[RMDB]
RNA sequence: GGGAACGACUCGAGUAGAGUCGAAAACAGCAAAAAGGAACCGAUUCCCACCAAGUUCGGAAAGAGAUACCGGGCGAGGCGCUGAAGAAAGAAUCUCGCUUCAGACACCCCAAAGACUCGACUGAAGAAUGCACGCCAUCGUUCGCGAUGGCGUGAACACUUACUUAUCCUUCGGGAUAAGUAAGUGAAAAGAAACAACAACAACAAC
Reactivity to DMS in 0.01 (KOAc 150mM, MgCl2 10mM, bicine 150mM(pH8.5), 24C), signal-to-noise 1, nucleotides 027 to 156: c070a120g020c020a030a070a000a130a070g020g000a110a100c060c020g030a190u000u010c010c010c020a190c080c050a080a260g030u000u010c040g040g030a140a100a130g000a110g020a120u010a130c020c030g000g000g000c020g020a090g010g010c030g000c020u000g000a030a090g010a040a110a110g010a150a090u000c010u010c040g040c000u010u010c020a010g000a300c010a110c020c000c050c000a050a060a130g010a020c020u040c000g000a130c050u000g000a140a130g010a060a100u000g040c000a010c000g000c000c010a030u010c000g000u010u000c270g060c010g000a010u000g000g010c030g010u000g030a010a040
Reactivity to 2A3 in 0.01 (KOAc 150mM, MgCl2 10mM, bicine 150mM(pH8.5), 24C), signal-to-noise 3, nucleotides 027 to 156: c010a000g050c030a010a070a090a080a080g130g040a070a030c070c060g030a110u020u020c000c000c010a000c030c020a050a020g030u030u030c020g000g040a100a160a040g090a020g020a010u070a090c020c030g000g000g000c040g010a060g010g050c090g030c040u050g020a050a030g050a040a170a010g060a110a110u060c080u020c130g050c010u000u010c010a040g040a060c020a080c040c040c010c030a070a210a010g040a060c040u020c100g030a050c070u050g020a030a010g030a090a050u130g060c010a000c000g010c000c000a000u000c000g030u050u050c130g010c000g100a000u000g010g000c000g000u000g010a000a000